About this RNA: Chemical mapping of a 177-nucleotide RNA with DMS and 2A3. Values cover nucleotides 27 to 126. The reactions ran in a buffer of 150 mM KOAc, 10 mM MgCl2 and 150 mM bicine (pH 8.5), at 24 C.
[RMDB]
RNA sequence: GGGAACGACUCGAGUAGAGUCGAAAAGAAAGAAAGAAAACCGUGUGGAAAAGAAUGGCUAUAACCACCGAAACCUGAGGAAACAGGAAGCCACAACGCAAGCCAUGUGGUUCGCACACGGAAGAAAAGUAUUAGCCCUGUUCGCAGGGCUAAUACUAAAAGAAACAACAACAACAAC
Reactivity to DMS in 0.01 (KOAc 150mM, MgCl2 10mM, bicine 150mM(pH8.5), 24C), signal-to-noise 2, nucleotides 027 to 126: g000a170a100a050g020a100a100a180g000a090a130a160a020c050c000g000u010g040u010g000g020a060a050a080a040g000a070a030u010g000g030c000u020a030u010a070a100c150c080a070c070c040g000a050a100a100c020c010u000g000a130g020g010a090a170a200c020a000g000g010a100a070g020c010c030a070c080a070a080c150g000c170a040a010g000c020c020a060u000g070u070g000g010u020u000c290g030c010a000c030a000c000g000g000a060a120g000a090a010a080
Reactivity to 2A3 in 0.01 (KOAc 150mM, MgCl2 10mM, bicine 150mM(pH8.5), 24C), signal-to-noise 1, nucleotides 027 to 126: g110a000a050a000g100a000a170a000g050a000a080a000a000c010c020g030u000g000u010g000g110a010a000a000a050g090a080a000u040g000g000c030u010a020u030a290a130c030c070a040c030c030g030a060a030a050c000c000u000g020a090g040g190a070a000a070c020a000g000g000a000a000g010c000c010a040c000a040a050c190g060c150a050a000g030c000c000a010u010g000u000g070g130u080u020c010g070c020a020c000a000c010g050g010a010a000g060a000a070a000